[RMDB]
Chemical mapping of a 207-nucleotide RNA with 2A3. The data come from the RNA Mapping Database (RMDB), library M2RFPK. The reactions ran in a buffer of 150 mM KOAc, 10 mM MgCl2 and 150 mM bicine (pH 8.5), at 24 C.
RNA sequence: GGGAACGACUCGAGUAGAGUCGAAAAUAAAAUUCGAAAGUAUUGCUAUAGUUAAGGUUGCGCUUGCCUAUUUAGGCAUACUUCUCAGGAUGGCGCGUUGCAGUCCAACAAGAUCCAGGGACUGUACAAAACAGGCUCGUGUUCGCACGAGCCUGAACAUGCUACUAUGCUUCGGCAUAGUAGCAUGAAAAGAAACAACAACAACAAC
Reactivity to 2A3 in 0.01 (KOAc 150mM, MgCl2 10mM, bicine 150mM(pH8.5), 24C), signal-to-noise 1, nucleotides 027 to 156: u150a000a050a030a000u060u090c030g080a110a000a000g030u000a050u060u200g020c030u050a060u080a300g010u130u180a100a000g000g010u050u230g080c040g070c080u110u110g130c000c100u210a300u110u170u150a030g000g000c000a000u000a000c000u070u000c040u000c060a080g030g000a030u170g010g030c030g000c000g120u000u060g050c070a000g100u030c000c000a010a010c000a150a120g000a230u060c040c000a030g020g000g000a000c000u000g000u000a040c040a000a090a060a060c050a000g000g060c000u000c000g000u000g090u000u090c190g000c090a000c000g000a000g070c080c000u000g010a000a000